This 177-nucleotide RNA was probed chemically with DMS and 2A3.
Values are in units of 0.01, from 0 to 300, in steps of 10.
Source: RMDB library OK2TST, as collected in RNAgym.
The 2A3 profile rests on 2,621 reads.
DMS adducts were read by reverse transcription with MarathonRT.
For DMS, 2,900 sequencing reads were counted.
Reactivities are given for positions 27 through 126.
The RNA was probed in 150 mM KOAc, 10 mM MgCl2 and 150 mM bicine (pH 8.5) at 24 C.
[RMDB]
RNA sequence: GGGAACGACUCGAGUAGAGUCGAAAACACUGCCACGUUACACACCAACCGCGGCGACAUCAAAGUCGCCCUGUUCGGAAACCACGUGCCCAAGACUGUCGCCAACUUCGUUGGGCUGGCGCAAGGACGCGCUACUAUUAUUCGUAAUAGUAGCGCGAAAAGAAACAACAACAACAAC
Reactivity to DMS in 0.01 (KOAc 150mM, MgCl2 10mM, bicine 150mM(pH8.5), 24C), signal-to-noise 4, nucleotides 027 to 126: c050a120c140u000g020c140c000a050c050g010u000u000a080c200a160c290a170c010c010a010a010c020c050g000c220g030g010c000g030a020c000a080u020c300a100a110a120g010u000c000g010c000c000c000u000g000u000u010c140g010g000a050a090a140c140c140a050c030g010u000g020c040c010c010a090a090g010a110c100u000g020u010c010g020c010c020a020a010c030u000u010c140g010u000u020g010g010g000c030u000g010g000c000g020c030a060a080g000g010a170
Reactivity to 2A3 in 0.01 (KOAc 150mM, MgCl2 10mM, bicine 150mM(pH8.5), 24C), signal-to-noise 3, nucleotides 027 to 126: c080a020c070u150g080c080c010a050c050g030u070u090a040c080a010c030a050c030c020a020a000c000c010g100c160g030g040c000g020a010c010a020u300c170a170a100a060g010u000c000g040c000c000c000u000g000u000u040c070g000g040a070a010a000c060c010a020c030g010u040g020c030c000c000a040a040g080a060c070u100g020u170c020g000c040c000a020a020c040u160u160c120g180u170u180g040g000g010c020u020g020g000c010g000c030a020a080g050g020a040